[RMDB]
RNA sequence: GGGAACGACUCGAGUAGAGUCGAAAACUAGCCGUUGCGCCUUAGCGCACAGUCCUGAAGGCCCCACAUCUUGUGGAUCUUGCCGUGGACAUGUUUCUGGCAUGUGUUUCUCAAGCCUGCAACCGACACGUUGGACCUUCUUCGGAAGGUCCAACGUAAAAGAAACAACAACAACAAC
Reactivity to 2A3 in 0.01 (KOAc 150mM, MgCl2 10mM, bicine 150mM(pH8.5), 24C), signal-to-noise 2, nucleotides 027 to 126: c000u000a020g050c030c040g110u080u180g000c010g020c000c000u090u170a050g000c000g040c020a020c030a020g010u010c000c000u130g060a080a030g040g010c010c030c020c000a010c000a050u180c080u140u160g000u020g000g060a070u030c050u070u300g000c000c020g030u060g000g000a030c000a120u070g050u000u020u020c110u120g040g000c040a030u060g100u000g000u020u080u000c080u000c010a010a040g020c000c000u020g040c070a030a040c000c050g060a080c060
Reactivity to DMS in 0.01 (KOAc 150mM, MgCl2 10mM, bicine 150mM(pH8.5), 24C), signal-to-noise 1, nucleotides 027 to 126: c040u000a190g010c020c050g000u030u020g020c030g000c010c190u010u020a090g000c000g000c020a040c070a080g020u000c020c020u000g040a090a110g000g030c020c300c000c000a000c000a090u020c190u000u010g000u000g000g000a030u050c110u040u050g000c030c070g000u000g000g040a030c000a090u010g010u020u000u000c000u000g000g000c010a100u000g000u010g000u000u000u000c020u000c050a090a170g020c060c040u000g000c070a070a040c050c010g020a080c210